[RMDB]
RNA sequence: GGGAACGACUCGAGUAGAGUCGAAAAAAUAUGACGUACCUAUAAUUAUCGGCGCACUGGCUAUGAUCCCACUGUAGCCGCAUGCCCAAAAGAUGGCGGUUCGAGCGUGAGUGUCCGCCCACGCUGGAAACGGGUGUGCCCCAUGUGGGAAGCAAACCGGAUACUGAACUUUCGAGUUCAGUAUCCGAAAAGAAACAACAACAACAAC
Reactivity to 2A3 in 0.01 (KOAc 150mM, MgCl2 10mM, bicine 150mM(pH8.5), 24C), signal-to-noise 2, nucleotides 027 to 156: a000a000u210a080u100g040a020c020g040u050a130c000c040u080a080u130a240a220u200u140a080u210c040g020g020c030g020c080a020c080u100g030g000c000u020a050u090g060a190u030c000c030c010a000c010u000g030u060a010g020c050c000g000c000a000u040g010c000c000c000a050a010a090a000g140a080u070g040g040c050g070g000u060u060c070g050a060g030c040g000u060g010a110g070u070g080u020c030c060g010c000c000c000a030c000g020c000u050g080g010a030a060a080c050g000g020g010u000g010u010g000c020c000c000c010a070u200g020u010g000g000g000a020a000g060c050a090a040a050c050
This 207-nucleotide RNA was probed chemically with 2A3.
Conditions: 150 mM KOAc, 10 mM MgCl2 and 150 mM bicine (pH 8.5), 24 C.
It was measured as part of the RMDB library OK3TST.
The 2A3 profile rests on 903 reads.